[RMDB]
RNA sequence: GGGAACGACUCGAGUAGAGUCGAAAAACGGGUCGAAGGAGUCCACAUAAGUCAGUGGUGGUGGGAGCCCCUGUUGGGGGCGCUAUACCACAGCCGUUGAUGAGCAUGGCCGUUCUUAGGUGUAAGCAGUCCAUCGAUAAUUCGUUAUCGAUGGACUAAAAGAAACAACAACAACAAC
Reactivity to DMS in 0.01 (KOAc 150mM, MgCl2 10mM, bicine 150mM(pH8.5), 24C), signal-to-noise 4, nucleotides 027 to 126: a080c050g010g000g010u000c040g020a140a100g000g000a100g000u010c040c040a060c090a080u010a100a260g000u010c000a030g030u000g000g030u020g000g090u000g010g000g000a100g020c000c000c000c010u020g020u030u050g010g020g020g000g000c010g010c110u030a050u030a140c000c000a010c010a180g020c010c000g010u020u000g000a020u000g000a150g000c170a100u020g000g000c020c020g020u000u010c040u000u010a060g010g040u010g000u010a040a130g010c140
Reactivity to 2A3 in 0.01 (KOAc 150mM, MgCl2 10mM, bicine 150mM(pH8.5), 24C), signal-to-noise 5, nucleotides 027 to 126: a000c060g010g010g060u030c020g040a030a020g050g020a050g050u030c030c010a040c010a090u170a120a000g000u020c020a000g000u010g040g000u030g030g010u010g010g030g000a030g010c000c000c000c000u130g160u300u300g080g000g000g010g000c010g000c010u080a060u080a110c000c000a000c010a000g000c010c000g020u000u010g010a030u030g010a010g030c050a070u060g030g010c030c010g040u070u020c020u050u080a100g030g000u030g020u040a050a040g060c040

An RNA of 177 nucleotides, treated with DMS and 2A3 and read out base by base. 2A3 adducts were read by reverse transcription with SuperScript II with manganese. The RNA was probed in 150 mM KOAc, 10 mM MgCl2 and 150 mM bicine (pH 8.5) at 24 C.